[RMDB]
RNA sequence: GGGAACGACUCGAGUAGAGUCGAAAACAGCGACCGCCCCCUCCUCUAGCUGUGGGGGUGAGGGUCCCAUGUGGUGGCACAGGCCCCCUUGAGUGGGGUUAUCUCUGUGUUAGGGGUAUAUGAUGGGCCAAGCUGGUAUGUUCGCAUACCAGCUUGGAAAAGAAACAACAACAACAAC
Reactivity to DMS in 0.01 (KOAc 150mM, MgCl2 10mM, bicine 150mM(pH8.5), 24C), signal-to-noise 1, nucleotides 027 to 126: c060a140g020c210g010a100c040c060g000c000c010c010c000c010u000c030c020u020c170u010a090g020c140u010g060u000g000g020g020g000g020u000g000a040g020g000g000u010c010c030c020a130u000g010u000g040g000u020g020g010c020a010c010a030g000g010c080c000c000c010c000u010u010g010a100g010u010g010g010g010g020u010u000a050u000c120u000c000u010g000u010g020u000u000a130g010g000g020g070u010a150u000a040u010g010a090u010g000g000g030
Structure probing data (DMS) for a 177-nucleotide construct. The DMS profile rests on 1,349 reads.